[RMDB]
RNA sequence: GGGAACGACUCGAGUAGAGUCGAAAAGAGAUAGGCAGCCUCACAAGAAGCCCAAGGAUAUCUGCCUGCUCUGACUCCCACUCUGAGAUGGCUGCCCUCCCUUUUCCUUGGCCAUGCCUUCCUGCUGUCGAAAAUUCGGGUUCGCCCGAAUUUUCGAAAAAGAAACAACAACAACAAC
Reactivity to 2A3 in 0.01 (KOAc 150mM, MgCl2 10mM, bicine 150mM(pH8.5), 24C), signal-to-noise 2, nucleotides 027 to 126: g020a010g000a130u020a080g000g010c010a010g050c000c000u110c020a090c020a080a090g150a070a020g050c020c010c010a030a020g030g020a030u010a060u140c000u040g020c020c000u000g020c000u000c020u040g080a110c030u030c050c020c000a020c000u050c060u050g070a070g010a030u070g050g000c010u000g030c000c000c000u060c020c000c000u000u000u030u100c040c000u020u030g020g030c070c000a070u060g000c030c010u030u010c010c000u020g070c000u060g000
Reactivity to DMS in 0.01 (KOAc 150mM, MgCl2 10mM, bicine 150mM(pH8.5), 24C), signal-to-noise 1, nucleotides 027 to 126: g010a000g000a100u010a040g010g040c010a020g000c180c040u000c060a100c290a110a090g000a140a110g040c030c000c030a070a160g020g000a090u000a060u040c000u000g030c000c020u000g010c000u000c000u060g000a180c090u020c000c000c000a070c100u010c000u010g000a030g010a110u000g030g000c090u000g000c070c000c060u000c030c030c050u000u000u000u000c000c060u000u000g000g030c070c020a040u090g000c020c070u000u040c000c000u020g010c030u060g050